About this RNA:
This 177-nucleotide RNA was probed chemically with 2A3 and DMS. The data come from the RNA Mapping Database (RMDB), library OK1LIB. Reactivities are given for positions 27 through 126. The DMS profile rests on 2,853 reads. The reactions ran in a buffer of 150 mM KOAc, 10 mM MgCl2 and 150 mM bicine (pH 8.5), at 24 C.
[RMDB]
RNA sequence: GGGAACGACUCGAGUAGAGUCGAAAAUACGCUGGUAGCAGCAAGUAGCAGCUCAAUCCGCAGAUGAGCGGAAUAUACAGAUGAAAAUGGAUCUCGAUAGAGUUGCUACAAUCGAGACCAUUAGAGAGAGGUAUACGACUUUCGAGUCGUAUACCUCAAAAGAAACAACAACAACAAC
Reactivity to 2A3 in 0.01 (KOAc 150mM, MgCl2 10mM, bicine 150mM(pH8.5), 24C), signal-to-noise 4, nucleotides 027 to 126: u170a040c140g000c000u000g100g060u230a240g100c020a000g010c000a000a040g000u010a020g000c010a000g000c010u010c030a040a090u010c000c000g000c000a040g080a300u210g110a110g040c010g000g000a000a000u150a000u010a030c040a010g190a130u110g160a200a120a000a000u040g020g050a140u000c000u000c000g050a050u050a130g040a010g000u020u020g020c010u040a020c020a000a020u020c000g000a000g000a000c010c020a010u010u060a040g080a010g030a000
Reactivity to DMS in 0.01 (KOAc 150mM, MgCl2 10mM, bicine 150mM(pH8.5), 24C), signal-to-noise 2, nucleotides 027 to 126: u030a110c150g000c010u020g040g010u060a160g050c000a030g000c030a140a160g000u000a000g010c020a010g000c000u000c030a250a170u000c000c000g020c040a110g030a140u090g000a200g000c020g040g000a120a070u020a130u000a080c230a140g020a090u050g000a140a050a040a030u000g080g000a110u000c010u020c000g000a040u000a050g020a020g000u000u040g010c000u000a020c030a030a000u010c010g000a000g000a020c000c030a000u020u020a080g000a120g000a180